An RNA of 177 nucleotides, treated with 2A3 and DMS and read out base by base. Conditions: 150 mM KOAc, 10 mM MgCl2 and 150 mM bicine (pH 8.5), 24 C.

[RMDB]
RNA sequence: GGGAACGACUCGAGUAGAGUCGAAAAGAUAUGGACAAUCCCUCGCUAUGAAGUAUGCUAAUCUCGGAAACGAGACAACAUAUGGAGCGAGGAUUGUCCUAAGUCAAAACUACCGUUCGCGGUAGAACCAACAGUAGUUGUUCGCAACUACUGUUGGAAAAGAAACAACAACAACAAC
Reactivity to 2A3 in 0.01 (KOAc 150mM, MgCl2 10mM, bicine 150mM(pH8.5), 24C), signal-to-noise 4, nucleotides 027 to 126: g010a000u040a010u070g000g000a000c000a010a000u060c150c060c020u050c010g000c000u160a300u300g000a020a010g010u000a000u030g010c100u170a300a150u090c000u000c010g010g000a030a010a010c010g000a000g020a030c020a150a030c000a020u010a000u020g000g020a010g000c000g000a010g010g000a000u000u000g000u000c000c000u000a000a000g000u000c000a000a000a120a170c010u010a000c010c000g040u060u080c300g000c010g110g000u000a020g010a060a090
Reactivity to DMS in 0.01 (KOAc 150mM, MgCl2 10mM, bicine 150mM(pH8.5), 24C), signal-to-noise 3, nucleotides 027 to 126: g000a030u010a300u000g000g010a010c000a010a010u000c110c020c020u000c000g010c000u000a190u010g000a140a180g000u000a000u000g020c140u010a250a290u000c000u000c000g010g010a060a040a150c000g010a000g020a030c120a070a110c000a030u010a000u000g000g000a010g020c010g000a020g010g000a000u000u000g020u000c010c000u000a010a060g000u010c030a070a020a090a150c000u000a010c000c000g000u000u010c180g000c000g000g030u000a000g000a070a190